[RMDB]
RNA sequence: GGGAACGACUCGAGUAGAGUCGAAAACUACAUAAAUUCGUUUAUGUAGCAUGGGGGACGCGCAGACUCCCCGUCAGACGGCUCUAGCCUUCCAAGCUCUGCACUCAACAGCUUUCGAGCUGUUGAACGUGAGGUAUGAGUUCGCUCAUACCUCACGAAAAGAAACAACAACAACAAC
Reactivity to DMS in 0.01 (KOAc 150mM, MgCl2 10mM, bicine 150mM(pH8.5), 24C), signal-to-noise 2, nucleotides 027 to 126: c000u000a010c000a030u000a000a000a020u000u020c160g010u000u000u000a010u000g000u000a010g000c060a130u010g000g020g000g000g010a030c130g000c140g000c020a040g000a040c050u000c000c000c010c000g020u000c120a090g020a130c090g000g010c020u020c180u020a090g010c000c010u000u000c070c180a030a040g010c100u010c010u010g000c030a190c210u020c000a010a000c000a030g000c000u000u000u000c190g000a020g040c000u000g010u000u000g000a010a060
Reactivity to 2A3 in 0.01 (KOAc 150mM, MgCl2 10mM, bicine 150mM(pH8.5), 24C), signal-to-noise 2, nucleotides 027 to 126: c000u000a000c000a010u000a000a020a010u080u080c120g070u040u000u000a000u010g010u000a020g010c080a160u170g030g000g000g000g000a020c070g060c000g000c200a000g010a020c000u000c000c000c000c000g070u030c010a040g000a030c040g020g000c000u060c120u260a070g020c010c000u050u020c030c050a020a000g000c040u000c000u000g030c000a020c040u020c000a010a010c010a000g020c000u070u100u180c190g140a000g000c000u000g000u000u000g000a030a010
The record gives the reactivity of an RNA of 177 nucleotides to DMS and 2A3. For DMS the reverse transcriptase was MarathonRT. Source: RMDB library M2PK50, as collected in RNAgym.